[RMDB]
RNA sequence: GGGAACGACUCGAGUAGAGUCGAAAAGGCUCGGUAGUCGCCGCCACCAUGGCCAAGGACUCGGCUACCCCAGCGAGGUCGCAAGCAGCUUGGCUACUUUGAUAGGCGCGUAACCGCCUCCGCUGCCGGAGCCUCCAUGCUUCGGCAUGGAGGCUCCAAAAGAAACAACAACAACAAC
Reactivity to 2A3 in 0.01 (KOAc 150mM, MgCl2 10mM, bicine 150mM(pH8.5), 24C), signal-to-noise 1, nucleotides 027 to 126: g010g060c130u070c060g060g040u050a110g030u030c000g000c110c000g020c050c000a130c050c000a110u110g010g000c000c030a020a040g020g020a020c010u060c050g000g000c000u010a010c000c000c010c010a040g110c050g030a120g030g040u010c040g010c020a120a000g070c050a020g030c000u080u000g010g000c020u120a110c010u110u040u010g090a110u030a120g040g000c000g030c000g020u000a100a070c000c000g000c010c010u030c000c030g060c090u040g020c020c010
About this RNA: Structure probing data (2A3) for a 177-nucleotide construct. It was measured as part of the RMDB library OK1LIB. The 2A3 profile rests on 548 reads. Values cover nucleotides 27 to 126.